[RMDB]
RNA sequence: GGGAACGACUCGAGUAGAGUCGAAAACGACAGCUUUUCGAAGCUGUCGAUUGGCAAAGGCUUGGACCGGCCAGACAAAGGUCCGAUAGCAAAUCGUAACGAAGCUCGCCUGCUUCGGCAGGCGAAAUGGAAAUGACAGUUUCGACUGUCAUUUCCAAAAAGAAACAACAACAACAAC
Reactivity to DMS in 0.01 (KOAc 150mM, MgCl2 10mM, bicine 150mM(pH8.5), 24C), signal-to-noise 1, nucleotides 027 to 126: c010g000a000c010a010g000c000u050u000u000u000c190g000a010a010g000c000u000g010u000c010g000a040u010u010g000g050c070a170a150a120g000g010c000u020u000g000g000a010c030c000g000g000c030c080a160g020a100c210a000a020a150g010g000u010c000c030g000a100u020a120g020c100a060a070a090u010c040g040u000a110a070c120g000a090a110g010c050u000c010g000c000c000u000g020c000u000u000c120g010g010c010a030g000g000c000g010a000a010a030
Chemical mapping of a 177-nucleotide RNA with DMS.
For DMS the reverse transcriptase was MarathonRT.
The data come from the RNA Mapping Database (RMDB), library M2PK50.